Chemical mapping of a 177-nucleotide RNA with DMS. Reactivities are given for positions 27 through 126. For DMS, 747 sequencing reads were counted.
RNA sequence: GGGAACGACUCGAGUAGAGUCGAAAAAUGGAGAAGCACUAACGAAUCCUCUGGAUUCAAUGCCAGCGACUAAAUCUGGAUUCCAUUUAGCAACACCGUUGGCCAUACGUGCAGCAGCAAUUUGCCAAUUGGUUUGAAACUUCGGUUUCAAACCAAUAAAAGAAACAACAACAACAAC
Reactivity to DMS in 0.01 (KOAc 150mM, MgCl2 10mM, bicine 150mM(pH8.5), 24C), signal-to-noise 2, nucleotides 027 to 126: a030u000g000g000a030g030a230a100g020c070a030c060u010a110a090c250g000a040a030u010c010c030u050c300u030g010g030a030u000u010c050a100a070u000g000c000c000a000g010c220g000a140c080u000a050a070a090u020c150u000g010g010a150u010u000c050c060a000u000u000u000a080g010c210a030a050c260a100c210c010g000u000u000g000g010c010c200a140u000a060c200g010u000g020c000a110g010c140a070g010c100a010a060u000u000u000g050c030c070a110